[RMDB]
RNA sequence: GGGAACGACUCGAGUAGAGUCGAAAAGAAGAGCAGUCAGAUAAUCUUGUGCAGGAUGAAUGCUCGUAACUGCAUCGCACAAGUAGAUGUAGAUAACUUUAAUCUCACAUAGCGGAGGAGCCGCAGAGCGUACGAUAUAUUUCGAUAUAUCGUACGCAAAAGAAACAACAACAACAAC
Reactivity to DMS in 0.01 (KOAc 150mM, MgCl2 10mM, bicine 150mM(pH8.5), 24C), signal-to-noise 6, nucleotides 027 to 126: g010a200a040g000a020g020c000a020g000u010c010a120g010a160u050a080a040u010c010u010u000g010u010g000c010a220g000g000a090u010g000a060a060u010g010c000u000c050g030u030a030a070c020u010g000c000a000u000c010g010c020a030c070a100a120g000u020a070g000a020u000g000u000a000g000a080u030a040a050c070u010u010u000a150a100u000c010u000c030a120c150a080u030a070g020c010g000g010a210g010g020a080g010c000c020g010c020a090g000a190
Reactivity to 2A3 in 0.01 (KOAc 150mM, MgCl2 10mM, bicine 150mM(pH8.5), 24C), signal-to-noise 9, nucleotides 027 to 126: g090a050a010g010a000g010c020a000g040u070c010a010g040a220u160a150a090u100c020u060u100g040u060g050c060a030g030g100a030u060g040a080a050u050g010c000u010c040g010u040a030a020c020u020g000c000a000u000c010g020c020a040c030a130a060g050u080a030g090a020u020g020u020a010g010a100u110a040a020c000u030u060u100a070a060u030c010u030c010a070c030a130u160a050g000c010g010g010a100g050g070a020g120c020c000g000c020a000g020a010

Description
This 177-nucleotide RNA was probed chemically with DMS and 2A3. 2A3 adducts were read by reverse transcription with SuperScript II with manganese. 2A3 is a SHAPE reagent: it acylates the 2'-hydroxyl of flexible nucleotides of all four kinds. The reactions ran in a buffer of 150 mM KOAc, 10 mM MgCl2 and 150 mM bicine (pH 8.5), at 24 C.